[RMDB]
RNA sequence: GGGAACGACUCGAGUAGAGUCGAAAAAAUCCUAGCGUGAGUAUUGGAGAUUGCAGGUCUGUUGUCUCACUGAACUCUAAUUGUCAGAAUCCGCGUGAGACUCACCGACCGUGGCGGGUGGGACCGGGACUGGGACUGCUGGGAGUGUAAUCUCUCGAGUUGAUGCAUAGUUCGCUAUGCAUCAACUAAAAGAAACAACAACAACAAC
Reactivity to 2A3 in 0.01 (KOAc 150mM, MgCl2 10mM, bicine 150mM(pH8.5), 24C), signal-to-noise 1, nucleotides 027 to 156: a030a000u030c010c020u010a000g020c010g030u060g070a030g030u020a140u200u220g080g000a230g070a130u080u120g020c000a020g000g000u000c010u000g000u000u000g000u000c010u010c000a030c020u010g110a230a160c000u000c030u080a120a300u220u210g190u270c030a030g020a050a080u000c010c040g060c020g110u000g010a000g000a000c030u000c050a010c020c040g010a000c000c000g000u050g010g050c100g020g030g090u300g000g010g000a000c080c070g010g020g030a050c150u100g000g050g050a030c070u070g000c010u030g000g040g000a010g000u000g010u030a070a060u000c000u000c010u010c060g070